An RNA of 177 nucleotides, treated with 2A3 and DMS and read out base by base. For DMS the reverse transcriptase was MarathonRT. The reactions ran in a buffer of 150 mM KOAc, 10 mM MgCl2 and 150 mM bicine (pH 8.5), at 24 C. For 2A3, 5,991 sequencing reads were counted. Source: RMDB library OK2TRN, as collected in RNAgym.
RNA sequence: GGGAACGACUCGAGUAGAGUCGAAAAGAUCACUUGAGGCAAGGAGUUUGAGACCAGCCUGGGCAACAUAGUGAGACUCCAUCUGUACAGGAAAUUAUGAUAAAGACUUCAUUCCUUUAGGGCUGAAUGUAAUAUUACGGUUCGCCGUAAUAUUACAAAAAGAAACAACAACAACAAC
Reactivity to 2A3 in 0.01 (KOAc 150mM, MgCl2 10mM, bicine 150mM(pH8.5), 24C), signal-to-noise 4, nucleotides 027 to 126: g000a040u060c010a010c060u040u060g040a010g070g010c040a050a070g050g010a070g020u060u130u130g130a050g030a020c000c000a000g040c020c000u010g000g090g000c010a040a020c000a050u120a040g040u040g040a050g040a040c020u020c010c000a060u030c030u070g090u040a040c020a030g000g080a030a030a060u200u090a080u120g030a020u060a090a160a030g070a040c010u030u020c040a040u040u050c010c000u070u090u170a060g020g030g000c020u040g030a060a020
Reactivity to DMS in 0.01 (KOAc 150mM, MgCl2 10mM, bicine 150mM(pH8.5), 24C), signal-to-noise 9, nucleotides 027 to 126: g010a130u000c030a050c040u000u000g010a070g010g020c080a120a070g000g010a070g010u000u000u000g010a130g010a090c060c030a070g000c030c010u000g000g010g010c030a040a060c060a060u010a040g020u010g010a080g010a080c040u000c030c020a060u000c040u010g010u010a060c120a090g000g000a050a050a070u010u000a050u010g010a080u000a050a080a100g000a080c100u000u000c050a100u000u000c020c010u000u000u010a090g010g010g000c120u000g000a090a110